[RMDB]
RNA sequence: GGGAACGACUCGAGUAGAGUCGAAAAUGGUGAAUUUUUCUGCGCCGAGCUGCUCAGUUGAGUGAUAGCAUGUCACAAGAAGAUCAUAGGAUAGUUGAGAGGUUUCAUGGCCUUUUGCUCUCAGUUUUCCUGAACCUUCCCUCUUACAUUUAGGGCAGUAAUUAACACAGUUCGCUGUGUUAAUUACAAAAGAAACAACAACAACAAC
Reactivity to 2A3 in 0.01 (KOAc 150mM, MgCl2 10mM, bicine 150mM(pH8.5), 24C), signal-to-noise 7, nucleotides 027 to 156: u140g020g010u060g070a110a100u070u060u040u070u090c040u060g020c040g000c040c050g050a070g010c040u040g000c010u030c060a210g030u220u190g140a040g010u050g030a060u100a070g060c090a060u110g040u070c030a040c020a090a050g050a030a010g020a040u090c050a080u190a050g020g000a020u030a040g030u010u020g010a010g000a010g040g010u020u050u100c070a070u120g070g000c010c010u040u100u070u120g020c000u010c000u010c000a010g000u000u020u030u020c010c000u040g030a050a040c010c010u030u020c000c000c000u050c050u050u150a090c050a170u140u110u160a020g010g020g000c010a010
Reactivity to DMS in 0.01 (KOAc 150mM, MgCl2 10mM, bicine 150mM(pH8.5), 24C), signal-to-noise 3, nucleotides 027 to 156: u020g000g000u000g000a070a040u010u010u010u010u000c050u010g020c030g020c050c030g000a140g000c030u000g010c010u000c030a160g000u020u020g020a120g030u000g000a120u000a080g030c060a100u000g000u010c020a050c060a090a110g010a060a080g020a050u000c050a120u010a040g020g010a050u000a050g010u000u000g000a050g010a050g010g010u000u000u000c010a070u010g020g010c020c000u020u030u010u020g000c020u000c010u000c010a040g000u000u000u000u010c000c010u010g000a050a050c030c010u000u000c010c010c020u000c060u000u000a080c070a140u010u000u000a030g010g040g040c030a160
Chemical mapping of a 207-nucleotide RNA with 2A3 and DMS. 2A3 is a SHAPE reagent: it acylates the 2'-hydroxyl of flexible nucleotides of all four kinds. 2A3 adducts were read by reverse transcription with SuperScript II with manganese. The RNA was probed in 150 mM KOAc, 10 mM MgCl2 and 150 mM bicine (pH 8.5) at 24 C. DMS adducts were read by reverse transcription with MarathonRT. It was measured as part of the RMDB library OK3TST.